Structure probing data (2A3 and DMS) for a 177-nucleotide construct. For DMS the reverse transcriptase was MarathonRT. DMS (dimethyl sulfate) methylates the pairing face of unpaired adenines and cytosines. The RNA was probed in 150 mM KOAc, 10 mM MgCl2 and 150 mM bicine (pH 8.5) at 24 C.
[RMDB]
RNA sequence: GGGAACGACUCGAGUAGAGUCGAAAAAAGGCUGAUUAUAUAACACGAUUUUUGUGAACUUGUCAUCGCUAUGAUGACUGGUAAAACGAUAUUGCCUUAUUCACAUCGUAAGAAUUCGUCCAGAUGACUACCUAUAAAAUUUCGAUUUUAUAGGUAGAAAAGAAACAACAACAACAAC
Reactivity to 2A3 in 0.01 (KOAc 150mM, MgCl2 10mM, bicine 150mM(pH8.5), 24C), signal-to-noise 9, nucleotides 027 to 126: a000a000g070g000c060u070g050a150u180u070a070u060a050u040a220a050c050a010c080g090a090u040u050u050u170u160g040u020g030a030a030c010u030u030g000u000c000a000u000c000g090c220u240a140u300g000a000u000g000a000c000u000g000g010u040a060a070a040a020c070g020a030u030a060u100u130g000c010c000u020u020a060u030u050c050a050c010a060u040c030g060u070a070a030g030a070a110u090u050c020g030u020c030c020a020g010a080u050g020a040
Reactivity to DMS in 0.01 (KOAc 150mM, MgCl2 10mM, bicine 150mM(pH8.5), 24C), signal-to-noise 8, nucleotides 027 to 126: a060a020g000g010c010u010g010a080u010u010a100u010a080u010a090a150c090a050c040g010a100u010u020u010u020u010g010u000g000a210a030c040u000u000g010u000c010a010u000c000g010c290u030a070u030g000a000u000g010a000c010u000g000g000u000a030a050a070a080c120g010a040u020a040u010u000g010c010c030u000u000a110u010u010c060a070c080a080u010c060g000u010a060a080g010a060a100u000u000c060g010u000c040c040a140g010a090u010g000a220